Structure probing data (2A3) for a 207-nucleotide construct. For 2A3 the reverse transcriptase was SuperScript II with manganese. The RNA was probed in 150 mM KOAc, 10 mM MgCl2 and 150 mM bicine (pH 8.5) at 24 C.

RNA sequence: GGGAACGACUCGAGUAGAGUCGAAAAUGGCCUUGCAGACUUCCUCUCUCCCACCAGGAAAUGCUGCGCUGCAUUUGGGGCCACUUCCUGAGGGUGCUCGGGGGGACAUCGCCAACGCUGAGCCACAGUUCCAGCCUGCUGCACAGCCUGGGCUCUGCCCGUUGGGUUAAUUCGUUAACCCAACGGGAAAAGAAACAACAACAACAAC
Reactivity to 2A3 in 0.01 (KOAc 150mM, MgCl2 10mM, bicine 150mM(pH8.5), 24C), signal-to-noise 2, nucleotides 027 to 156: u020g020g010c010c020u030u250g010c020a060g000a120c050u060u040c020c000u020c000u010c040u000c000c010c000a030c040c000a000g070g000a010a050a060u230g040c080u040g060c090g130c080u130g060c070a250u100u100u230g030g000g000g000c000c000a010c020u040u020c000c000u010g030a070g020g000g050u100g070c090u120c160g010g030g000g000g010g000a000c030a050u130c050g060c070c020a030a090c060g000c040u030g010a030g030c000c000a070c010a030g020u170u060c020c000a040g060c000c020u050g070c040u040g000c060a040c040a070g010c010c040u070g000g000g020c010u000c060u110g050